Structure probing data (DMS and 2A3) for a 177-nucleotide construct. For 2A3 the reverse transcriptase was SuperScript II with manganese. It was measured as part of the RMDB library OK1LIB. The 2A3 profile rests on 13,932 reads.

RNA sequence: GGGAACGACUCGAGUAGAGUCGAAAACGAUGAAUCUGAAAACAGCGAUGUGGAUAUUGGCGAACCUGAUACCGAGGGAUAUGCUAUCACUGACCGGGGAUCUGCUCCCAUCUCUAUGGGGUUCAGGAGGCUAAAAAUGAUUCGUCAUUUUUAGCCUAAAAGAAACAACAACAACAAC
Reactivity to DMS in 0.01 (KOAc 150mM, MgCl2 10mM, bicine 150mM(pH8.5), 24C), signal-to-noise 6, nucleotides 027 to 126: c090g000a080u020g010a050a070u020c010u000g000a080a040a090a100c110a060g010c100g020a070u000g020u010g000g000a060u020a060u010u020g000g010c060g010a090a120c030c010u000g000a070u020a090c070c070g000a080g000g000g010a030u000a100u040g010c060u010a030u020c050a040c030u010g000a110c130c080g000g000g000g000a060u020c050u010g000c060u010c020c010c040a040u010c070u000c050u010a070u020g010g000g000g010u010u000c040a050g010g010
Reactivity to 2A3 in 0.01 (KOAc 150mM, MgCl2 10mM, bicine 150mM(pH8.5), 24C), signal-to-noise 9, nucleotides 027 to 126: c050g030a040u110g020a020a060u030c030u040g040a040a070a030a060c040a040g040c030g060a050u050g040u100g050g050a030u050a100u170u140g050g000c030g010a040a050c000c000u020g010a040u080a180c020c060g030a090g010g000g030a010u060a040u170g070c040u050a050u120c040a040c100u050g060a070c030c040g000g000g010g010a030u030c030u070g020c020u040c010c010c000a020u010c010u000c010u030a120u150g090g010g000g000u010u020c010a020g030g070